[RMDB]
RNA sequence: GGGAACGACUCGAGUAGAGUCGAAAAGACAUGUCGCCGCGCAUGAUGAGCCGCAUCAGGUGCAGCAUCUCGUCGUGGAAGAUCUCGCGGUGCUCGAUCGUGCGCUGCAGCGCUUCCUGGGGAGUGACACGACCCCACUGUUCGCAGUGGGGUCGUGAAAAGAAACAACAACAACAAC
Reactivity to 2A3 in 0.01 (KOAc 150mM, MgCl2 10mM, bicine 150mM(pH8.5), 24C), signal-to-noise 1, nucleotides 027 to 126: g020a030c000a050u150g030u070c020g010c040c000g000c000g000c000a010u010g000a030u000g010a080g100c080c010g030c050a090u090c050a090g170g050u090g020c080a000g020c000a120u010c020u000c070g300u020c030g020u130g060g040a130a020g060a030u070c030u010c060g000c010g020g060u110g040c010u030c030g180a120u030c060g020u000g040c040g000c020u000g000c010a020g010c110g010c000u020u020c000c000u000g000g000g000g000a090g030u080g000a060
Reactivity to DMS in 0.01 (KOAc 150mM, MgCl2 10mM, bicine 150mM(pH8.5), 24C), signal-to-noise 2, nucleotides 027 to 126: g010a140c070a090u020g000u000c090g010c010c070g000c020g030c030a010u020g000a040u010g000a060g030c040c080g010c060a090u010c170a120g000g030u010g000c100a090g020c110a030u000c010u000c060g040u030c130g000u000g010g000a120a040g000a040u000c030u000c100g030c050g000g020u020g000c000u000c020g020a060u000c040g020u000g010c000g030c010u000g000c010a080g010c090g000c070u040u000c000c010u000g020g010g010g000a150g000u010g000a190